[RMDB]
RNA sequence: GGGAACGACUCGAGUAGAGUCGAAAAAUCGACACCGAGGGAGAAGUCAUCAGGACGCUGGAGGGGAAAGUGCCCAACCUCGCGUGGGUAGCGCCUGCUCCCGAAGAAUCUCAAAGUGCCCCCCUCGCAGAGAUAGGGACUUCGGUCCCUAUCUCUGAAAAGAAACAACAACAACAAC
Reactivity to DMS in 0.01 (KOAc 150mM, MgCl2 10mM, bicine 150mM(pH8.5), 24C), signal-to-noise 1, nucleotides 027 to 126: a060u010c060g020a160c020a080c020c010g000a300g000g000g010a050g010a120a190g020u000c090a090u010c160a170g050g000a010c020g000c030u000g000g010a090g010g020g000g000a010a040a140g050u000g040c020c020c010a040a020c020c120u000c150g000c120g020u000g000g000g020u000a040g010c010g000c010c010u000g000c060u000c000c000c020g010a080a010g000a110a140u010c040u010c010a000a110a100g000u000g030c020c030c000c000c000c020u010c040g060
An RNA of 177 nucleotides, treated with DMS and read out base by base. DMS adducts were read by reverse transcription with MarathonRT. It was measured as part of the RMDB library OK2TRN. For DMS, 783 sequencing reads were counted. Conditions: 150 mM KOAc, 10 mM MgCl2 and 150 mM bicine (pH 8.5), 24 C.